[RMDB]
RNA sequence: GGGAACGACUCGAGUAGAGUCGAAAAAAGGGAAGUCAAUAUGAAGUAACUUUUGCUUUAAAAAACGCCUCUGCCCUCCUUGACCUUGCAACGGCCGAUCUAGCUGAUAUCGAGUGGCGCAAUCAACUGGGAGAAACAAUCGCAGUCACGCGGAACACGCCAUACGAAUAUUCGUAUUCGUAUGGCGAAAAGAAACAACAACAACAAC
Reactivity to 2A3 in 0.01 (KOAc 150mM, MgCl2 10mM, bicine 150mM(pH8.5), 24C), signal-to-noise 3, nucleotides 027 to 156: a050a000g060g020g000a030a020g010u040c030a050a040u080a090u220g040a060a020g020u100a060a130c110u100u060u140u200g040c030u050u090u190a060a110a010a020a000a000c050g010c010c020u010c040u060g020c020c010c020u030c030c010u010u040g020a050c020c040u040u030g000c010a060a060c090g070g000c020c000g020a020u030c020u030a020g070c040u020g070a030u030a030u130c020g020a060g070u060g010g010c040g000c050a030a060u070c010a000a080c040u030g000g020g040a020g090a020a060a030c060a050a050u070c030g000c070a010g030u070c020a000c050g040c010g000g080a070a020c080a010
Reactivity to DMS in 0.01 (KOAc 150mM, MgCl2 10mM, bicine 150mM(pH8.5), 24C), signal-to-noise 1, nucleotides 027 to 156: a050a010g000g030g010a030a060g010u010c010a090a120u000a170u010g020a040a100g030u000a090a090c170u000u000u020u000g010c020u000u000u000a000a110a090a070a050a060c020g010c000c020u000c050u000g000c020c050c000u000c020c030u000u010g020a030c050c030u030u000g020c040a080a080c140g030g020c020c010g020a090u000c060u010a090g040c030u000g020a080u000a100u000c090g030a070g020u010g020g010c020g080c030a090a080u000c030a060a060c030u020g020g000g020a070g010a110a050a090c130a060a020u010c080g010c020a070g030u000c050a020c100g000c000g000g000a110a090c110a130